RNA sequence: GGGAACGACUCGAGUAGAGUCGAAAAGCCGCCUAGGCGAGAAGAGAGUAAAUAGAGGAGAGAGCUUACCUGGGUCCUGGCAGCGCUGCAACGGAAUUCAGGGCGUUGGCCCCGGUGGAGUUCCGAUGUUAUACUAUUACUUCGGUAAUAGUAUAACAAAAGAAACAACAACAACAAC
Reactivity to DMS in 0.01 (KOAc 150mM, MgCl2 10mM, bicine 150mM(pH8.5), 24C), signal-to-noise 4, nucleotides 027 to 126: g020c040c030g010c060c030u010a120g010g020c010g010a030g000a080a070g000a080g000a100g010u000a050a060a100u000a080g000a090g010g010a110g000a080g020a080g010c050u000u000a050c030c020u000g000g000g010u000c030c080u010g010g020c040a070g010c060g020c060u000g000c120a110a090c060g010g010a050a100u000u000c040a080g000g000g010c030g010u010u010g010g010c050c010c000c070g010g010u000g020g000a090g000u000u000c000c010g010a180u010
Reactivity to 2A3 in 0.01 (KOAc 150mM, MgCl2 10mM, bicine 150mM(pH8.5), 24C), signal-to-noise 3, nucleotides 027 to 126: g030c010c000g000c040c040u080a050g000g040c040g030a020g010a090a020g060a010g010a000g040u140a030a100a190u160a080g030a020g060g000a030g010a020g000a000g030c010u040u040a050c000c010u020g010g010g040u060c010c040u050g050g010c030a060g030c070g010c020u080g010c020a100a030c050g060g040a040a010u080u060c020a050g010g030g000c030g040u090u080g130g000c030c020c000c000g090g010u090g060g010a030g000u010u000c000c010g000a020u050

Record summary
Chemical mapping of a 177-nucleotide RNA with DMS and 2A3. It was measured as part of the RMDB library VIROID. 2A3 adducts were read by reverse transcription with SuperScript II with manganese. The reactions ran in a buffer of 150 mM KOAc, 10 mM MgCl2 and 150 mM bicine (pH 8.5), at 24 C. For 2A3, 6,587 sequencing reads were counted. Reactivities are given for positions 27 through 126. DMS adducts were read by reverse transcription with MarathonRT.